Structure probing data (DMS and 2A3) for a 177-nucleotide construct. Reactivities are rounded to 0.1 and cut off at 0 and 3. High 2A3 reactivity points to a flexible backbone, as in loops and unpaired stretches. It was measured as part of the RMDB library OK1LIB. Values cover nucleotides 27 to 126.

RNA sequence: GGGAACGACUCGAGUAGAGUCGAAAAGGUGGCUCGUACUCAGCAGAGAAGAGUGCCCUCUACGAGUCACCGAUUUAGCAUGUUCGUCCUACGAAAGUGGCUCACAAGCAGUAGGACGUUCAUGCGAGGGAUGCUGUACCUUCGGGUAUAGCAUCCCAAAAGAAACAACAACAACAAC
Reactivity to DMS in 0.01 (KOAc 150mM, MgCl2 10mM, bicine 150mM(pH8.5), 24C), signal-to-noise 4, nucleotides 027 to 126: g000g030u000g010g000c010u010c000g000u000a030c030u000c050a110g030c140a120g010a130g000a210a110g000a050g020u020g000c010c010c040u010c060u000a000c000g000a000g000u000c010a000c050c000g010a010u030u030u040a180g010c040a000u000g020u000u000c000g000u000c020c000u000a000c010g000a040a140a120g010u030g010g000c140u030c110a130c080a100a090g000c170a270g000u000a000g000g000a030c000g010u000u000c010a000u000g000c000g000a130
Reactivity to 2A3 in 0.01 (KOAc 150mM, MgCl2 10mM, bicine 150mM(pH8.5), 24C), signal-to-noise 9, nucleotides 027 to 126: g000g000u010g000g000c000u000c000g010u010a010c030u030c080a040g040c080a030g110a010g020a300a030g040a020g040u080g020c020c010c000u030c010u010a000c000g000a000g000u000c000a000c000c000g000a000u000u010u070a020g000c000a000u000g010u000u000c000g000u000c000c000u010a000c020g060a080a070a130g110u070g150g070c040u090c070a070c030a060a040g030c030a010g010u000a000g000g000a000c000g000u000u000c000a000u000g000c000g000a050